Conditions: 150 mM KOAc, 10 mM MgCl2 and 150 mM bicine (pH 8.5), 24 C.
Chemical mapping of a 207-nucleotide RNA with 2A3.

RNA sequence: GGGAACGACUCGAGUAGAGUCGAAAAGAACAUGAACAAGAACUACAAAACGGCAACCAUUAUAUUUGGCCACUAAUUGGAGCAAUUUGAGACAACACCUCAGAUUGUGGGUCCCGGGCGCAGUUCCUUUUUGGCCAAGAGCACGACCGCACCGAGACUACGUGGUGAUGUUCGCAUCACCACGUAGAAAAGAAACAACAACAACAAC
Reactivity to 2A3 in 0.01 (KOAc 150mM, MgCl2 10mM, bicine 150mM(pH8.5), 24C), signal-to-noise 2, nucleotides 027 to 156: g000a120a010c060a160u160g020a100a000c050a150a080g090a090a030c090u200a040c120a010a060a080a060c020g020g000c010a030a100c030c050a100u220u210a110u150a070u130u210u050g090g000c050c010a050c040u100a120a060u080u150g010g010a020g020c000a010a000u020u010u000g030a020g030a020c080a120a060c030a170c010c000u010c040a000g010a040u000u010g010u040g060g080g030u040c090c090c120g000g030g020c070g000c020a010g070u040u020c000c050u040u110u080u060u080g000g030c010c010a020a030g030a010g000c010a010c090g080a080c020c030g050c010a000c040c120g070a030g030a010
Values cover nucleotides 27 to 156.